[RMDB]
RNA sequence: GGGAACGACUCGAGUAGAGUCGAAAAUCAAAAGUACGAUGUGGCGAUCUCUACGGCAGCACCAGGGUUAGACUCGAUGGUCGUGGAGACUGUCGAGACAGCACAGCGUGUAUCGAAUAUCUACGGACGCUAUCCUCAGAUUCGUCUGAGGAUAGCGAAAAGAAACAACAACAACAAC
Reactivity to DMS in 0.01 (KOAc 150mM, MgCl2 10mM, bicine 150mM(pH8.5), 24C), signal-to-noise 2, nucleotides 027 to 126: u020c090a050a120a140a140g000u000a000c170g020a050u000g040u010g030g010c030g020a030u000c050u000c040u010a080c080g020g020c050a060g000c050a040c040c030a080g000g010g040u000u000a060g010a170c030u000c030g000a010u000g000g010u000c010g000u040g020g000a240g010a030c020u000g010u000c010g020a020g000a070c080a050g000c000a020c020a060g010c100g000u000g010u030a030u000c080g020a170a100u010a090u010c030u000a090c050g000g010a180
Reactivity to 2A3 in 0.01 (KOAc 150mM, MgCl2 10mM, bicine 150mM(pH8.5), 24C), signal-to-noise 1, nucleotides 027 to 126: u090c050a030a050a040a030g090u110a030c070g030a080u090g060u030g090g020c000g010a060u050c020u000c030u040a070c060g040g000c000a020g000c050a010c010c050a030g080g040g000u120u120a070g040a060c000u030c010g020a020u020g000g000u000c000g000u090g100g030a110g000a020c000u000g000u010c010g010a000g010a030c020a000g000c020a000c000a030g070c060g030u060g060u000a060u140c040g000a030a040u060a050u120c020u050a030c030g110g000a020
Source information:
Chemical mapping of a 177-nucleotide RNA with DMS and 2A3. The reactions ran in a buffer of 150 mM KOAc, 10 mM MgCl2 and 150 mM bicine (pH 8.5), at 24 C. The DMS profile rests on 1,422 reads. 2A3 adducts were read by reverse transcription with SuperScript II with manganese. For DMS the reverse transcriptase was MarathonRT.